[RMDB]
RNA sequence: GGGAACGACUCGAGUAGAGUCGAAAAGAGCCUGGGGAUCCGGAUCUCAGCGACGGGUCAUGGUCGACGGUCAGUAGUGGGGCCGACACGGAAGAUGUCGUGUGCUGCUCAAUGUCUUAUUCCUGGACAGGCGCACUCGUCACCCCGUGCGCUGCGGACCGCAAUAAAGGUUCGCCUUUAUUGCGGUAAAAGAAACAACAACAACAAC
Reactivity to 2A3 in 0.01 (KOAc 150mM, MgCl2 10mM, bicine 150mM(pH8.5), 24C), signal-to-noise 2, nucleotides 027 to 156: g020a040g130c000c020u020g000g000g010g010a040u000c010c030g000g130a190u030c070u010c090a020g010c010g020a010c020g010g000g030u090c060a100u190g090g020u110c000g010a070c020g070g000u020c030a040g050u120a010g020u140g030g110g000g000c000c010g010a050c100a030c100g030g050a060a050g060a210u060g010u010c020g000u010g000u010g030c070u110g000c000u010c050a140a140u040g030u000c020u070u170a220u290u180c090c150u070g000g020a000c000a010g040g030c010g000c000a000c000u020c000g010u000c020a080c000c030c010c010g020u090g010c030g000c010u030g050c010g030g000

Record summary: Structure probing data (2A3) for a 207-nucleotide construct. Reactivities are given for positions 27 through 156. For 2A3, 891 sequencing reads were counted.